[RMDB]
Chemical mapping of a 207-nucleotide RNA with 2A3. The RNA was probed in 150 mM KOAc, 10 mM MgCl2 and 150 mM bicine (pH 8.5) at 24 C. For 2A3 the reverse transcriptase was SuperScript II with manganese.

RNA sequence: GGGAACGACUCGAGUAGAGUCGAAAACCUAAAGUGGGGGGCAAUGCGUGAGGCUGGUUUCACAGAGCAGCGACAACCUCCCGCUCCUGGCAGUGGAAGGAUAACAGGCUGUUGUCACCUAGACUCAUAUGGUCUAAUGGGCUGAUAAAACUAGACCGAUGUACACGUGGUUCGCCACGUGUACAUCAAAAGAAACAACAACAACAAC
Reactivity to 2A3 in 0.01 (KOAc 150mM, MgCl2 10mM, bicine 150mM(pH8.5), 24C), signal-to-noise 1, nucleotides 027 to 156: c000c000u040a140a000a000g090u010g030g000g000g000g000g000c000a000a000u000g000c000g000u000g000a080g000g000c000u000g030g080u170u170u000c160a230c000a080g000a000g000c030a000g020c000g030a080c060a250a300c050c000u000c000c000c000g000c000u000c000c020u000g070g000c050a000g000u000g000g000a130a040g080g000a050u050a150a100c040a040g010g000c000u020g000u020u070g010u050c000a140c030c020u060a010g020a040c000u000c060a240u120a210u300g000g000u000c000u000a090a090u100g000g000g030c130u000g080a040u130a080a050a000a010c000u020a000g030a070c020c030